[RMDB]
RNA sequence: GGGAACGACUCGAGUAGAGUCGAAAAGCUGCUGGCCGGUGCCUGCAGCAACGACGCCGCACUGGUUCGCGACGGCACACGCUGGCAGAUCGUCGGCGAUCCCACCGAGGGCGCGAUGCUCGUCGUGCGAUCAUUAAUAGUUCGCUAUUAAUGAUCGAAAAGAAACAACAACAACAAC
Reactivity to 2A3 in 0.01 (KOAc 150mM, MgCl2 10mM, bicine 150mM(pH8.5), 24C), signal-to-noise 9, nucleotides 027 to 126: g010c010u010g000c010u020g020g000c030c100g230g130u300g010c010c010u020g010c020a010g040c000a000a000c030g090a020c050g020c030c010g020c060a070c190u220g080g040u130u100c050g000c020g040a050c030g030g000c020a010c000a000c030g020c010u040g100g000c030a040g030a160u080c050g070u000c000g030g010c010g020a090u020c010c010c010a010c010c030g020a100g040g040g000c030g000c040g120a150u110g020c050u070c130g050u010c000g000u040g060
Reactivity to DMS in 0.01 (KOAc 150mM, MgCl2 10mM, bicine 150mM(pH8.5), 24C), signal-to-noise 9, nucleotides 027 to 126: g010c020u000g010c010u000g010g020c010c180g020g020u010g010c010c010u000g010c040a080g010c020a040a040c130g010a100c110g010c040c060g010c150a080c100u010g010g010u000u000c070g010c020g010a070c060g000g010c040a050c080a080c080g010c010u000g010g010c060a080g000a070u000c080g010u000c010g000g010c010g000a100u000c020c010c010a300c060c030g000a070g010g000g000c020g010c040g000a120u030g000c050u010c040g010u000c010g020u000g010